About this RNA:
The data come from the RNA Mapping Database (RMDB), library OK1LIB. This 177-nucleotide RNA was probed chemically with DMS and 2A3. For 2A3 the reverse transcriptase was SuperScript II with manganese. The 2A3 profile rests on 2,376 reads. The RNA was probed in 150 mM KOAc, 10 mM MgCl2 and 150 mM bicine (pH 8.5) at 24 C.
[RMDB]
RNA sequence: GGGAACGACUCGAGUAGAGUCGAAAAGAAACGACGUAAAGCCUCUGAACGUCGCAGGGAGAAAUAUAGGAAACCUGAGGAAACAGGAACACGCUACGUAUGCCAUAAAAGAACUAGAGGCAAGAAAGACGCCUAUUUAGUUCGCUAAAUAGGCGUCAAAAGAAACAACAACAACAAC
Reactivity to DMS in 0.01 (KOAc 150mM, MgCl2 10mM, bicine 150mM(pH8.5), 24C), signal-to-noise 2, nucleotides 027 to 126: g000a060a100a160c040g010a000c010g020u000a120a150a070g020c000c000u000c000u000g000a120a050c000g000u000c000g030c140a140g000g000g000a110g000a070a090a020u080a180u050a090g000g000a130a130a030c010c010u030g010a020g090g020a130a020a080c010a030g000g010a030a060c070a070c080g020c050u070a030c140g000u020a060u000g040c060c010a010u010a020a030a010a010g000a090a080c060u000a010g010a020g010g000c030a170a110g000a150a020a100
Reactivity to 2A3 in 0.01 (KOAc 150mM, MgCl2 10mM, bicine 150mM(pH8.5), 24C), signal-to-noise 3, nucleotides 027 to 126: g090a050a050a020c000g000a000c000g020u040a080a030a080g010c040c000u030c000u000g000a110a000c000g020u010c040g000c090a070g070g020g020a140g090a030a070a000u260a050u140a070g090g010a120a020a010c000c000u020g040a100g040g290a050a060a030c000a000g020g000a030a010c060a000c020g080c050u140a030c050g100u050a060u220g050c020c000a050u180a130a110a000a040g070a010a040c060u100a090g000a000g000g000c000a010a010g010a040a000a000